The record gives the reactivity of an RNA of 207 nucleotides to DMS and 2A3. For 2A3 the reverse transcriptase was SuperScript II with manganese. Conditions: 150 mM KOAc, 10 mM MgCl2 and 150 mM bicine (pH 8.5), 24 C.
RNA sequence: GGGAACGACUCGAGUAGAGUCGAAAAUGGAACGAAAUUCCGGAAUCUAUUGUGAGAUCCAAUCGUCAUUAAGUACAUAUAAUUCUACAUACAUCUGUUACAAUCUAACGGUAACUGCAGACGCUAGCAACGCAACUAAUCCUUUAAUAACUACCACCAACCUGAUCUAGUUCGCUAGAUCAGGUUGAAAAGAAACAACAACAACAAC
Reactivity to DMS in 0.01 (KOAc 150mM, MgCl2 10mM, bicine 150mM(pH8.5), 24C), signal-to-noise 3, nucleotides 027 to 156: u010g010g010a040a160c040g000a150a080a300u000u000c000c000g020g020a040a060u000c040u020a110u000u000g020u000g000a080g000a110u000c010c030a070a100u010c050g000u010c070a060u000u040a030a070g050u000a050c040a130u000a090u000a070a080u010u000c020u000a070c010a140u020a050c050a060u000c040u000g010u010u000a110c030a100a170u000c190u000a000a040c020g000g030u000a040a110c130u000g030c060a110g010a100c030g030c030u000a060g070c020a070a030c000g010c010a040a100c050u000a030a100u000c000c010u030u000u000a020a070u000a050a060c050u000a130c020c030a120c080
Reactivity to 2A3 in 0.01 (KOAc 150mM, MgCl2 10mM, bicine 150mM(pH8.5), 24C), signal-to-noise 5, nucleotides 027 to 156: u060g000g020a040a020c030g030a060a030a040u160u030c040c010g000g050a050a050u020c030u050a130u130u150g050u080g100a020g010a040u010c020c010a030a060u040c040g090u010c020a040u080u150a140a040g040u070a050c020a060u250a030u080a150a090u130u020c040u110a090c010a090u110a030c030a080u050c050u060g030u030u010a030c030a060a150u060c070u130a060a050c070g080g000u010a020a010c020u030g000c020a020g030a050c030g000c040u020a030g020c040a080a030c040g010c030a010a020c010u030a030a040u030c020c000u030u130u060a090a050u080a080a010c040u060a060c010c040a010c000
Notes:
DMS adducts were read by reverse transcription with MarathonRT. Values cover nucleotides 27 to 156.